[RMDB]
RNA sequence: GGGAACGACUCGAGUAGAGUCGAAAAGGCAAAGAACAGUGAAGUCUAAUAACUACCACGUUUGUAGAAGCAGAGUAAAUGCGGCGGAUAUAUGGAGAGAAAGAGCGUGCACCUUAAGCGUGGAGGUCUCACAGAGGUUUCAUUAGCCUAGUAACAAGAAUGAUAGUUGCUUCGGCAACUAUCAUUCAAAAGAAACAACAACAACAAC
Reactivity to 2A3 in 0.01 (KOAc 150mM, MgCl2 10mM, bicine 150mM(pH8.5), 24C), signal-to-noise 3, nucleotides 027 to 156: g010g000c040a150a020a000g050a080a020c030a050g010u020g060a120a000g030u050c040u090a050a050u110a180a030c040u080a130c020c020a040c030g040u030u090u060g090u040a070g030a080a010g010c050a000g040a020g070u110a020a060a130u060g010c010g010g000c010g010g040a000u010a000u000a030u140g080g020a050g010a010g000a070a070a000g050a000g030c040g020u050g010c020a040c010c010u060u060a060a000g000c000g010u000g010g020a020g010g030u000c020u020c030a030c030a000g070a050g060g030u050u060u060c050a040u090u050a000g000c000c000u010a010g010u040a080a030c050a100a030
Reactivity to DMS in 0.01 (KOAc 150mM, MgCl2 10mM, bicine 150mM(pH8.5), 24C), signal-to-noise 1, nucleotides 027 to 156: g040g000c050a230a200a090g030a090a090c070a110g040u000g000a110a100g040u000c010u010a160a200u000a070a130c040u000a100c000c000a000c060g020u000u010u000g000u020a030g030a060a090g000c000a110g010a110g000u000a060a060a050u020g040c030g030g050c040g060g040a110u010a130u040a070u010g000g010a110g000a110g010a000a090a090g020a070g010c060g030u020g030c040a060c020c020u000u000a050a120g030c030g020u000g010g000a160g010g000u000c010u000c050a130c040a090g000a090g000g030u000u000u000c040a070u020u000a090g050c050c010u000a130g030u000a090a020c160a100a240